[RMDB]
RNA sequence: GGGAACGACUCGAGUAGAGUCGAAAAACUCCGUCCGGGGGUGAACCGCGAAACAGUACCGGACUCGCCAUGUAGCAUCCUGUCUUUCGGAGACUGCCUGGUUAACUAAAAGAGAGACUAAACAUGUAGCGCCGAGGAUGUAGGCUUUCUGGACGCGCGUAAAUCUAACCUUCGGGUUAGAUUUACGAAAAGAAACAACAACAACAAC
Reactivity to 2A3 in 0.01 (KOAc 150mM, MgCl2 10mM, bicine 150mM(pH8.5), 24C), signal-to-noise 1, nucleotides 027 to 156: a000c000u000c000c010g040u000c000c010g000g000g030g000g000u030g040a030a050c000c010g070c040g170a120a150a020c030a070g120u060a060c000c010g010g010a030c030u010c060g000c000c000a000u030g010u040a000g030c020a040u010c010c010u050g060u110c010u010u080u040c010g030g010a020g030a100c000u000g000c010c000u000g030g000u090u060a060a060c120u180a050a040a090a010g000a000g000a000g010a000c010u070a140a090a000c050a120u130g060u130a030g060c020g000c010c010g030a010g060g000a050u090g060u140a090g020g000c020u050u020u000c030u020g040g030a060c000g000c010g000